[RMDB]
RNA sequence: GGGAACGACUCGAGUAGAGUCGAAAAGUACACCAACAGCAAUUGGGGCGACAAGUGCUACGAACUAAUCCAGAGCAAUACAAACAUAACCGCUAGCGAGGAGCACAGCAAGUUUGACUUUCAGCCGAAAAACGCGUUUAUUCGUAAACGCGUUUUUAAAAGAAACAACAACAACAAC
Reactivity to 2A3 in 0.01 (KOAc 150mM, MgCl2 10mM, bicine 150mM(pH8.5), 24C), signal-to-noise 1, nucleotides 027 to 126: g030u040a020c030a070c110c000a020a100c000a030g030c040a010a150u100u180g040g000g090g030c010g010a050c040a130a020g010u010g020c020u070a030c030g080a040a020c040u080a040a080u040c000c020a030g000a040g150c000a090a020u110a110c040a020a110a000c000a000u160a090a050c000c050g030c020u020a020g000c000g020a010g020g010a030g010c010a000c030a080g000c010a070a000g000u050u050u010g020a010c040u070u110u040c050a050g110c030c050g030
Reactivity to DMS in 0.01 (KOAc 150mM, MgCl2 10mM, bicine 150mM(pH8.5), 24C), signal-to-noise 3, nucleotides 027 to 126: g040u000a170c100a120c030c010a030a140c090a050g020c080a030a130u000u000g010g050g010g010c070g020a050c120a050a030g020u000g010c020u000a060c100g000a050a080c110u010a100a060u000c070c030a080g040a150g020c080a050a060u000a040c140a030a070a080c060a100u000a090a090c080c070g010c080u000a080g040c040g020a070g010g010a080g020c070a050c090a050g010c070a050a090g000u010u000u000g000a060c140u000u010u020c070a080g030c080c110g000